[RMDB]
RNA sequence: GGGAACGACUCGAGUAGAGUCGAAAAUGAUGCUGUUGCGAUUGAUGCAGUAUUGGCGGCAGAUGCGCUAAUGAAAGAACUCGGACUGGAUGGGGAGUGAGACUUGAAUGAGUGGACCGCCUGAAGGGCUUCCUGAUUGGAUUACCGUUAGGUAGAGAUAGAAUAGUUCGUUCGCGAACUAUUCUAUAAAAGAAACAACAACAACAAC
Reactivity to DMS in 0.01 (KOAc 150mM, MgCl2 10mM, bicine 150mM(pH8.5), 24C), signal-to-noise 2, nucleotides 027 to 156: u000g000a080u000g030c000u010g030u000u010g010c020g040a210u000u000g000a080u000g020c050a120g040u000a090u010u000g040g050c050g020g010c050a110g010a080u000g020c040g030c010u000a000a050u020g010a090a120a090g010a050a090c050u000c000g000g020a130c080u000g010g010a080u010g010g010g040g000a120g010u000g000a140g010a090c030u000u000g010a090a120u010g000a040g010u000g000g010a090c030c040g030c050c010u000g010a060a040g010g010g000c050u000u000c030c000u010g000a110u000u010g030g000a150u000u000a050c010c010g020u000u000a040g010g000u000a050g000a140g000
Reactivity to 2A3 in 0.01 (KOAc 150mM, MgCl2 10mM, bicine 150mM(pH8.5), 24C), signal-to-noise 4, nucleotides 027 to 156: u120g030a020u060g010c020u000g030u050u070g030c060g070a130u020u120g020a030u100g030c010a000g030u060a100u050u050g040g010c040g010g020c040a040g060a160u130g060c040g000c060u070a060a030u140g120a070a020a050g050a050a030c030u010c080g010g060a020c030u040g020g010a030u040g000g010g000g020a040g030u040g020a010g010a010c020u030u040g070a070a040u050g010a030g010u070g010g030a040c000c050g010c000c000u040g040a060a040g020g000g030c000u050u050c000c000u060g020a120u080u220g000g000a010u050u090a080c020c020g020u070u030a020g000g040u030a030g000a000g010

An RNA of 207 nucleotides, treated with DMS and 2A3 and read out base by base. The DMS profile rests on 5,440 reads. The data come from the RNA Mapping Database (RMDB), library OK3TST. For DMS the reverse transcriptase was MarathonRT.